[RMDB]
RNA sequence: GGGAACGACUCGAGUAGAGUCGAAAAGCAAUCAGCAUUUUUUCUGGCGGAAGUGGUGGAGAAUAUUUCGCUGCCGCAGGCUAUCCGCCUUGUAUCGGCCAACCCGGCUCGCGCCCUGCGGCUUGAACCAUGGUGGCUAUUUCGAUAGCCACCAUGGAAAAGAAACAACAACAACAAC
Reactivity to DMS in 0.01 (KOAc 150mM, MgCl2 10mM, bicine 150mM(pH8.5), 24C), signal-to-noise 1, nucleotides 027 to 126: g010c050a080a110u010c140a220g010c070a020u000u030u010u010u000u010c030u000g010g010c070g000g030a050a100g040u000g000g010u010g030g010a070g000a080a080u000a090u000u000u000c030g000c040u000g040c000c000g020c020a040g010g000c130u000a090u000c040c020g010c000c050u000u000g010u000a040u000c120g000g000c030c020a090a150c130c110c070g020g000c020u020c150g040c120g000c130c020c020u000g000c060g000g030c000u010u000g000a050a080

Source information
The record gives the reactivity of an RNA of 177 nucleotides to DMS. Conditions: 150 mM KOAc, 10 mM MgCl2 and 150 mM bicine (pH 8.5), 24 C.